[RMDB]
RNA sequence: GGGAACGACUCGAGUAGAGUCGAAAAUGGUUAAUGGAUUAUGCAGUUCCUUUGCUUCUUUACCACUUAUCUUUUGAGUUUUUGUCAAAGAUUUUAUCCCAAAAACCAGUCUGAAGAAGGAGGAAGACGAUAUCGUGUGAUUCGUCACACGAUAUCGAAAAGAAACAACAACAACAAC
Reactivity to DMS in 0.01 (KOAc 150mM, MgCl2 10mM, bicine 150mM(pH8.5), 24C), signal-to-noise 3, nucleotides 027 to 126: u010g000g010u010u010a050a090u000g000g000a120u010u010a090u030g000c100a100g000u020u000c000c020u000u010u020g010c010u000u000c010u000u000u000a130c110c040a110c120u020u000a070u000c000u000u010u010u020g000a050g000u010u000u030u030u050g000u000c040a000a020a020g000a010u000u000u000u000a100u010c030c040c000a010a070a020a040a060c060c070a070g020u010c060u010g000a040a030g000a030a020g020g000a040g000g000a050a030g010a170
Reactivity to 2A3 in 0.01 (KOAc 150mM, MgCl2 10mM, bicine 150mM(pH8.5), 24C), signal-to-noise 6, nucleotides 027 to 126: u080g020g020u090u080a060a050u140g060g020a130u110u080a060u300g110c050a040g090u020u040c000c000u030u040u070g080c000u020u010c010u010u040u040a040c020c010a060c050u050u030a030u040c010u020u090u070u120g050a080g100u140u090u070u250u250g140u090c010a000a000a020g010a010u000u010u040u090a070u060c010c000c000a060a070a010a010a000c030c010a020g080u060c070u100g050a040a030g030a020a000g030g010a010g010g000a020a010g050a020